RNA sequence: GGGAACGACUCGAGUAGAGUCGAAAAAAUGUUUAGUAAAUUACAUAGUAAAUACAAAACACCAUAUGUCGCAAUCAUAUUCCUAGUAGGUGUGUCGUUAAUUGCACCUUGGCUAGGAAGAACUGCAAUCUCUAUGGGAGUUCGCUCCCAUAGAGAUAAAAGAAACAACAACAACAAC
Reactivity to DMS in 0.01 (KOAc 150mM, MgCl2 10mM, bicine 150mM(pH8.5), 24C), signal-to-noise 2, nucleotides 027 to 126: a120a040u000g000u000u000u010a180g000u010a030a020a190u000u000a050c000a140u010a150g000u000a030a030a160u000a060c030a060a040a020a010c000a160c020c030a090u000a060u030g000u000c060g030c020a080a010u020c090a030u010a050u000u000c000c000u000a000g010u000a000g000g020u000g010u000g000u030c300g010u050u060a040a060u010u020g010c000a000c010c060u000u030g000g020c000u020a010g050g000a000a020g000a050a070c120u030g000c060a110
Reactivity to 2A3 in 0.01 (KOAc 150mM, MgCl2 10mM, bicine 150mM(pH8.5), 24C), signal-to-noise 4, nucleotides 027 to 126: a000a010u080g000u040u050u020a090g040u080a050a130a180u080u060a040c030a120u150a080g100u090a080a090a010u070a080c040a000a020a010a010c010a010c020c060a070u030a040u190g060u070c050g050c050a010a090u080c010a070u030a130u040u010c000c000u000a000g020u010a010g030g010u010g020u040g030u040c090g020u060u260a170a060u120u200g000c010a010c000c010u040u090g090g000c000u000a010g000g000a000a000g000a000a010c020u000g000c010a020

The data come from the RNA Mapping Database (RMDB), library OK1LIB. Structure probing data (DMS and 2A3) for a 177-nucleotide construct. For 2A3, 3,332 sequencing reads were counted. In probing experiments dimethyl sulfate is read out at A N1 and C N3, which are open when not base-paired. Conditions: 150 mM KOAc, 10 mM MgCl2 and 150 mM bicine (pH 8.5), 24 C. 2A3 adducts were read by reverse transcription with SuperScript II with manganese. The DMS profile rests on 2,679 reads.